[RMDB]
RNA sequence: GGGAACGACUCGAGUAGAGUCGAAAAGAUAUGGAUGUUCUCUCUUUGGUUGCGACGAUCUCGGAAACGAGGGAGCAACGAGAGAGACAUCCUAAGUCAAACCAUCCUGAGUUCGCUCAGGAUGGAACCUUCACUAUUAGUUCGCUAAUAGUGAAGGAAAAGAAACAACAACAACAAC
Reactivity to DMS in 0.01 (KOAc 150mM, MgCl2 10mM, bicine 150mM(pH8.5), 24C), signal-to-noise 8, nucleotides 027 to 126: g010a030u000a300u010g000g000a010u000g000u000u000c000u000c000u000c000u010u000u010g030g020u000u000g010c010g000a070c270g000a020u000c000u000c000g000g010a110a090a230c010g000a020g010g000g010a020g020c000a010a000c000g000a000g000a010g000a000g000a020c000a000u010c000c000u000a010a060g010u000c030a120a110a230c010c000a000u000c000c000u000g000a020g010u000u020c240g020c000u000c000a000g000g000a010u000g000g000a020a040
Reactivity to 2A3 in 0.01 (KOAc 150mM, MgCl2 10mM, bicine 150mM(pH8.5), 24C), signal-to-noise 9, nucleotides 027 to 126: g030a020u100a050u180g010g010a030u030g250u300u060c010u000c000u000c030u070u110u300g300g010u020u010g030c040g110a240c010g000a280u010c000u000c010g020g040a080a070a060c010g000a000g010g000g000a020g000c000a000a010c020g000a000g000a000g000a000g000a000c000a000u000c000c000u000a040a000g030u010c040a060a030a110c000c000a000u000c000c000u000g010a010g020u070u170c270g100c100u000c000a000g000g000a000u000g000g000a000a010